[RMDB]
RNA sequence: GGGAACGACUCGAGUAGAGUCGAAAAGAUGAUGCCUCUCGGUUACUUCAUACCGUGCUUGCAAAGGCUGAGUUAUGCUGUUCUGCACGCAUGGUUUGGAGAGAGUGGUGCAAUGUCUGUGGCAUAACAAGCACUUAUUCUUCGGAAUAAGUGCUUGAAAAGAAACAACAACAACAAC
Reactivity to 2A3 in 0.01 (KOAc 150mM, MgCl2 10mM, bicine 150mM(pH8.5), 24C), signal-to-noise 3, nucleotides 027 to 126: g020a030u160g020a040u040g020c010c000u000c000u000c030g110g000u120u200a100c000u010u010c010a000u000a010c010c000g010u000g000c010u000u020g010c010a040a050a050g020g000c070u060g050a110g230u200u140a130u200g030c030u060g150u180u020c040u050g000c020a010c030g000c010a000u000g050g000u030u010u020g010g000a020g020a000g000a010g020u080g000g070u060g000c040a040a080u090g020u060c040u030g100u060g080g000c020a020u040a140a080
Reactivity to DMS in 0.01 (KOAc 150mM, MgCl2 10mM, bicine 150mM(pH8.5), 24C), signal-to-noise 4, nucleotides 027 to 126: g010a040u010g010a120u000g000c000c000u010c010u000c010g020g010u010u020a140c020u000u000c020a020u000a020c010c000g020u000g010c010u000u000g010c020a020a070a240g000g010c000u000g010a230g030u010u020a060u010g010c010u000g000u000u020c220u000g020c000a010c080g010c000a010u000g000g020u000u000u000g000g000a020g010a080g010a030g010u010g010g020u000g020c040a060a060u010g010u000c030u000g010u000g010g010c110a080u010a080a200